[RMDB]
RNA sequence: GGGAACGACUCGAGUAGAGUCGAAAACUGGGCGAGUUCCUGGAGGAAGUACACAAGCACUCCACAGUGAUAGGCAAGGUCUGGCUCACUGUCCUUUUCAUAUUCCGCAUGCUGGUGCUGGGCACAGUCAAUAUGGCGGCUUCGGCCGCCAUAUUGAAAAAGAAACAACAACAACAAC
Reactivity to 2A3 in 0.01 (KOAc 150mM, MgCl2 10mM, bicine 150mM(pH8.5), 24C), signal-to-noise 4, nucleotides 027 to 126: c030u050g000g040g010c040g040a020g060u070u040c010c000u010g000g050a030g060g040a150a090g060u190a020c130a020c080a050a110g070c020a030c050u000c000c010a010c030a040g120u100g080a050u130a080g060g050c050a060a050g050g010u050c020u010g020g060c010u040c030a060c020u060g060u190c010c000u120u120u000u040c030a050u090a130u150u040c000c000g020c060a050u080g070c030u050g040g040u060g050c020u070g030g050g010c050a050c040a160g070
Reactivity to DMS in 0.01 (KOAc 150mM, MgCl2 10mM, bicine 150mM(pH8.5), 24C), signal-to-noise 2, nucleotides 027 to 126: c050u000g020g010g030c140g010a120g020u000u010c010c000u000g020g000a100g060g000a110a070g010u010a060c090a110c170a050a040g040c080a140c040u000c030c010a180c060a050g000u020g010a070u010a130g000g030c090a010a120g000g020u000c010u000g000g000c040u000c040a010c060u060g000u030c010c030u000u010u000u080c110a030u010a070u040u000c020c000g000c050a030u030g010c000u000g000g010u000g000c000u000g000g010g070c090a040c100a030g020